Source information: Source: RMDB library OK2TST, as collected in RNAgym. The record gives the reactivity of an RNA of 177 nucleotides to DMS and 2A3. 2A3 adducts were read by reverse transcription with SuperScript II with manganese.
[RMDB]
RNA sequence: GGGAACGACUCGAGUAGAGUCGAAAAUAUCGGGUGCCGUCAGGACUGGAUUUGCCGGUGCGCUGUUUUAGCACUGCGAUGCGAGCCUCUGCCGGUAUCGUGAGGCCGUUGCCGUUAUCCUCGCCACAGUUCGACAUUCUUUCGAGAAUGUCGAACUAAAAGAAACAACAACAACAAC
Reactivity to DMS in 0.01 (KOAc 150mM, MgCl2 10mM, bicine 150mM(pH8.5), 24C), signal-to-noise 1, nucleotides 027 to 126: u010a090u010c030g010g010g000u000g020c000c000g000u000c030a040g010g000a030c040u010g000g000a130u000u000u020g020c080c050g000g010u000g010c060g010c230u010g010u000u020u010u000a150g000c010a030c020u010g020c080g000a040u000g020c120g000a090g050c020c020u000c010u010g010c070c000g020g030u010a010u000c030g050u010g010a090g000g020c040c070g000u010u000g020c020c010g010u000u000a110u000c020c010u000c090g020c030c110a090c250
Reactivity to 2A3 in 0.01 (KOAc 150mM, MgCl2 10mM, bicine 150mM(pH8.5), 24C), signal-to-noise 1, nucleotides 027 to 126: u230a040u010c040g010g000g020u020g020c000c000g020u030c020a020g060g020a100c050u110g060g010a110u010u120u300g110c080c060g010g040u030g000c050g000c040u190g270u200u130u050u200a010g000c000a010c000u040g010c030g020a050u060g060c010g000a020g000c010c000u030c010u050g000c020c010g000g020u000a040u030c000g000u010g020a070g000g030c050c050g070u040u150g020c000c000g010u050u030a080u150c030c010u000c050g000c010c010a070c000

The RNA was probed in 150 mM KOAc, 10 mM MgCl2 and 150 mM bicine (pH 8.5) at 24 C.